[RMDB]
RNA sequence: GGGAACGACUCGAGUAGAGUCGAAAAAAAGUUAAAAUAGUAGAACUUUUAUAGAUAACGAUUUGGAUUUUGUAGACGAGGAGGAUAGUGAUCGAAUCAGAUCGGCGGAUGCUAUCCCGGAUGUGGCCUUGAUUCAAUUUUUCGAAAUUGAAUCAAGAAAAGAAACAACAACAACAAC
Reactivity to DMS in 0.01 (KOAc 150mM, MgCl2 10mM, bicine 150mM(pH8.5), 24C), signal-to-noise 5, nucleotides 027 to 126: a020a010a040g020u020u010a040a050a110a130u050a150g000u020a120g010a030a030c000u000u000u000u000a100u020a080g000a050u010a080a070c040g000a050u010u010u020g000g010a070u000u010u010u020g000u010a070g000a080c080g010a100g010g010a110g010g010a050u020a060g000u020g000a050u010c020g000a070a080u010c100a060g000a030u010c020g010g020c110g000g020a050u020g000c030u000a030u000c000c000c020g010g010a050u020g010u000g000g000c160
Reactivity to 2A3 in 0.01 (KOAc 150mM, MgCl2 10mM, bicine 150mM(pH8.5), 24C), signal-to-noise 5, nucleotides 027 to 126: a000a000a000g100u100u030a090a150a150a210u270a120g070u050a080g070a090a010c000u000u040u000u030a110u070a090g060a080u140a090a050c020g020a040u080u070u130g040g020a050u040u030u090u180g090u080a070g030a070c070g050a030g080g030a030g020g000a070u030a050g070u060g060a040u020c020g020a020a110u150c060a020g020a090u040c010g030g020c040g090g020a030u080g010c000u010a010u040c000c000c010g000g040a070u080g020u060g030g030c010
The data come from the RNA Mapping Database (RMDB), libraries RFM100 and RFMREP. This 177-nucleotide RNA was probed chemically with DMS and 2A3. For DMS the reverse transcriptase was MarathonRT. Values cover nucleotides 27 to 126. The reactions ran in a buffer of 150 mM KOAc, 10 mM MgCl2 and 150 mM bicine (pH 8.5), at 24 C.